[RMDB]
RNA sequence: GGGAACGACUCGAGUAGAGUCGAAAAGGUUCAUGGAUGGCGAAAAUGCCUAUGAAGUGGUGAAGGCCAUGUUACUUAAAAAGGAGCCACUUCUCUAUGUGCCCAUCCGGCUGGCUGGACACACUAGGAGUACGAUCCUUCGGGAUCGUAAAAAGAAACAACAACAACAAC
Reactivity to 2A3 in 0.01 (KOAc 150mM, MgCl2 10mM, bicine 150mM(pH8.5), 24C), signal-to-noise 4, nucleotides 027 to 129: g030g000u040u020c000a010u060g000g000a030u030g030g020c020g070a110a050a120a060u250g000c000c000u000a110u070g010a040a000g000u020g050g000u040g020a080a030g100g030c020c010a030u050g030u030u080a110c060u060u160a050a000a030a030a100g050g000a000g000c020c000a000c000u030u000c020u000c010u000a040u050g020u020g000c030c000c000a010u010c000c000g040g090c130u210g000g000c000u000g010g010a020c000a010c000a040c050u060a030g050g010a010g050
Reactivity to DMS in 0.01 (KOAc 150mM, MgCl2 10mM, bicine 150mM(pH8.5), 24C), signal-to-noise 3, nucleotides 027 to 129: g000g000u020u050c020a060u030g030g020a010u000g030g000c050g040a000a070a120a110u070g000c030c010u060a000u000g010a070a020g020u020g030g050u030g030a090a030g020g020c060c040a000u000g030u020u010a000c120u030u060a000a000a000a000a000g050g020a300g020c000c030a010c050u030u000c010u050c060u040a070u020g040u000g040c030c000c020a050u000c040c040g000g000c170u100g020g050c070u020g000g050a060c080a000c000a050c110u050a050g020g020a000g020